An RNA of 207 nucleotides, treated with 2A3 and read out base by base.
It was measured as part of the RMDB library RSTRND.
For 2A3 the reverse transcriptase was SuperScript II with manganese.
Values cover nucleotides 27 to 156.
RNA sequence: GGGAACGACUCGAGUAGAGUCGAAAAAAACCGGAAGUGCAUGCCGAGAAGGAGAUCUCUCGUAAAUAAGACUCAAUUAAAUAUAAAUGCAAACGAUGAAAACUUUGCUGGUGGGGAAGCUAUCGCUGCCUAAUAAGCACUUUAGUUAAACCAUCACGAAUGACAUAACGUUCGCGUUAUGUCAUUCAAAAGAAACAACAACAACAAC
Reactivity to 2A3 in 0.01 (KOAc 150mM, MgCl2 10mM, bicine 150mM(pH8.5), 24C), signal-to-noise 1, nucleotides 027 to 156: a000a000a000c140c040g040g010a190a100g070u060g200c090a080u100g040c010c040g000a000g000a020a020g080g000a070g010a080u000c020u000c000u000c030g100u140a010a070a000u060a010a020g010a000c000u000c050a010a150u160u300a130a020a040u270a070u200a100a180a090u090g040c000a000a030a000c000g070a020u140g050a030a000a120a080c080u030u090u110g030c080u020g000g000u000g000g000g000g010a000a090g000c000u000a000u000c020g090c170u000g000c010c000u140a230a090u290a110a020g000c000a000c000u000u010u000a000g000u010u000a110a060a000c000c000a000u000c040a030c130
Overview: The reactions ran in a buffer of 150 mM KOAc, 10 mM MgCl2 and 150 mM bicine (pH 8.5), at 24 C.